[RMDB]
Conditions: 150 mM KOAc, 10 mM MgCl2 and 150 mM bicine (pH 8.5), 24 C.
An RNA of 177 nucleotides, treated with DMS and 2A3 and read out base by base.
For 2A3 the reverse transcriptase was SuperScript II with manganese.
RNA sequence: GGGAACGACUCGAGUAGAGUCGAAAAUAUCAAAUCACUCUCACCAGAAGUCCAGGCAUCCCUCCCUGCCAACAUACGAUCUGUAGAGACAGCAGACAGCUCAGCACUCUGGGAGGAGCUCAAAUCCCCAUGGAUCCGGUUUCGACCGGAUCCAUGGAAAAGAAACAACAACAACAAC
Reactivity to DMS in 0.01 (KOAc 150mM, MgCl2 10mM, bicine 150mM(pH8.5), 24C), signal-to-noise 1, nucleotides 027 to 126: u100a090u000c080a010a080a010u000c110a000c080u000c010u000c050a150c010c000a100g000a080a130g000u000c060c100a030g000g010c050a150u000c050c080c060u000c030c000c050u000g000c080c100a230a040c030a090u050a180c170g000a000u050c170u050g000u000a200g000a290g000a040c090a180g050c100a000g000a030c100a140g000c000u000c110a050g010c140a130c050u000c010u040g000g000g000a050g000g000a010g000c080u030c090a040a110a100u000c000c000
Reactivity to 2A3 in 0.01 (KOAc 150mM, MgCl2 10mM, bicine 150mM(pH8.5), 24C), signal-to-noise 2, nucleotides 027 to 126: u140a040u050c020a000a090a030u090c020a010c000u070c040u010c010a030c060c000a020g040a130a000g110u010c030c000a050g010g000c000a140u040c010c000c060u000c010c000c000u040g000c050c000a050a000c040a090u140a040c100g150a200u020c030u000g100u050a060g040a010g070a110c050a010g050c000a000g090a130c010a000g010c040u000c080a040g070c050a000c000u030c010u000g000g070g000a010g030g000a000g000c000u040c060a060a050a110u030c000c050